RNA sequence: GGGAACGACUCGAGUAGAGUCGAAAAGUGUUAGCGUUCGCGCUAACACAAAGAACGCUGCAACGCGCAGCGCGCUCGCGAGAGCACGAAAGAGCGUUAUAUAAAGCUCGGGCUUCGGCCCGAGCAACCCCUUUACAAAGUUCGCUUUGUAAAGGGGAAAAGAAACAACAACAACAAC
Reactivity to 2A3 in 0.01 (KOAc 150mM, MgCl2 10mM, bicine 150mM(pH8.5), 24C), signal-to-noise 1, nucleotides 027 to 126: g020u010g010u010u010a020g000c020g020u010u050c240g010c000g000c070u030a000a020c010a020c010a000a000a000g050a070a010c010g000c020u020g000c020a150a120c090g000c000g000c090a000g010c000g000c040g020c010u000c000g040c010g000a030g000a000g160c040a040c080g130a120a060a040g040a030g000c000g010u090u010a170u010a000u040a200a200a070g050c000u000c000g030g020g000c030u090u120c220g110g020c010c030c030g010a010g000c000a000a000
Reactivity to DMS in 0.01 (KOAc 150mM, MgCl2 10mM, bicine 150mM(pH8.5), 24C), signal-to-noise 2, nucleotides 027 to 126: g000u000g000u010u010a020g030c010g030u000u010c230g050c020g010c000u000a010a010c010a010c010a020a030a120g030a130a180c050g010c020u010g000c030a060a050c090g040c090g000c010a050g000c000g000c080g010c010u000c000g000c300g020a230g010a000g010c000a060c050g000a030a080a050g010a040g030c010g000u000u010a120u000a130u010a100a150a080g000c010u000c000g020g000g000c000u000u020c210g020g000c020c000c000g010a000g000c010a030a030
Annotation: The record gives the reactivity of an RNA of 177 nucleotides to 2A3 and DMS. The RNA was probed in 150 mM KOAc, 10 mM MgCl2 and 150 mM bicine (pH 8.5) at 24 C. Values cover nucleotides 27 to 126.